[RMDB]
RNA sequence: GGGAACGACUCGAGUAGAGUCGAAAAAGUUAGGUUCGCUAUGGUGCAACUCCUUAAGGCAAUAACGAACUAAUUCUAAGCAAGUAAUGGAGAAAUGCCAGGGUCACUAUCUAGCCAUAAUAGUGCUGUAAGUGACUUAGAUUCGUCUAAGUCACAAGACCGCUUAAUGAUUCGUCAUUAAGCGGUCAAAAGAAACAACAACAACAAC
Reactivity to 2A3 in 0.01 (KOAc 150mM, MgCl2 10mM, bicine 150mM(pH8.5), 24C), signal-to-noise 4, nucleotides 027 to 156: a000g110u110u070a060g010g080u040u030c010g000c050u030a040u110g050g000u050g030c050a110a110c040u070c040c000u090u100a130a070g050g000c040a050a080u050a140a060c050g040a010a010c020u020a030a070u110u100c070u110a000a110g050c080a090a040g070u130a060a060u110g090g000a060g050a060a090a010u050g000c010c020a020g050g010g000u040c010a000c020u010a020u070c020u030a030g030c010c000a020u040a120a070u050a130g060u050g000c050u020g040u160a160a090g000u010g000a000c000u000u000a000g000a000u050u040c040g010u000c090u000a020a000g000u000c000a000c000a020a010
Reactivity to DMS in 0.01 (KOAc 150mM, MgCl2 10mM, bicine 150mM(pH8.5), 24C), signal-to-noise 2, nucleotides 027 to 156: a090g000u000u020a050g010g010u010u000c060g060c000u000a020u000g000g060u000g040c040a120a090c070u000c030c030u000u010a090a070g000g010c050a070a070u000a060a110c030g010a080a070c040u010a070a070u080u000c080u000a130a140g020c060a070a080g000u020a070a060u010g010g010a120g000a080a060a090u000g020c050c030a040g020g020g030u010c000a060c020u010a020u000c010u000a170g000c030c040a100u010a130a080u000a090g050u010g010c020u000g030u000a040a120g030u010g000a040c010u000u040a000g000a050u010u010c300g040u000c000u010a000a010g000u000c000a010c000a070a210
Structure probing data (2A3 and DMS) for a 207-nucleotide construct. Conditions: 150 mM KOAc, 10 mM MgCl2 and 150 mM bicine (pH 8.5), 24 C. Values cover nucleotides 27 to 156. The DMS profile rests on 3,206 reads.